The data come from the RNA Mapping Database (RMDB), library ARCHII. The record gives the reactivity of an RNA of 207 nucleotides to DMS and 2A3. DMS adducts were read by reverse transcription with MarathonRT.
RNA sequence: GGGAACGACUCGAGUAGAGUCGAAAAGGGAAAGAGAAGAGAUGGAAUCAGACUGGUCGGACGGACGCCUGUCAAUUGGCAGCCUGACGACGAGAUCCCAAUAAAUUGACUACACACGUAGAAGCUUAAGUAUACGAUGCCUUCGGACGUGGGUUCGGAUUGUUUCAAUGUUCGCAUUGAAACAAUCAAAAGAAACAACAACAACAAC
Reactivity to DMS in 0.01 (KOAc 150mM, MgCl2 10mM, bicine 150mM(pH8.5), 24C), signal-to-noise 3, nucleotides 027 to 156: g010g020g000a060a030a050g030a070g010a110a120g020a090g030a080u010g010g010a050a140u010c030a070g010a120c070u000g020g020u020c000g040g030a280c100g030g020a050c030g020c030c000u000g000u000c080a030a150u010u010g040g050c000a130g050c010c010u000g010a180c010g010a050c020g020a120g000a100u000c000c010c010a060a150u000a060a070a140u000u000g000a150c010u020a070c020a050c020a030c020g050u000a060g010a060a020g000c030u000u000a060a140g020u010a130u010a060c110g010a150u000g030c100c030u000u000c000g020g000a010c020g030u020g000g000g030u010u010c070g000
Reactivity to 2A3 in 0.01 (KOAc 150mM, MgCl2 10mM, bicine 150mM(pH8.5), 24C), signal-to-noise 4, nucleotides 027 to 156: g060g000g030a030a070a000g070a000g020a070a030g040a020g000a030u100g040g060a050a070u090c020a040g060a080c050u070g020g000u020c010g020g010a010c040g030g010a100c040g000c010c000u020g030u050c030a040a080u030u040g010g000c030a020g050c020c000u040g030a020c000g000a000c010g020a030g010a040u090c050c010c020a010a000u080a020a020a020u060u020g000a000c000u060a030c110a000c000a000c020g010u020a020g010a020a000g000c020u100u070a160a010g070u100a170u030a250c120g040a070u060g000c020c020u020u020c030g090g050a010c000g000u000g000g050g030u070u100c030g050
Conditions: 150 mM KOAc, 10 mM MgCl2 and 150 mM bicine (pH 8.5), 24 C.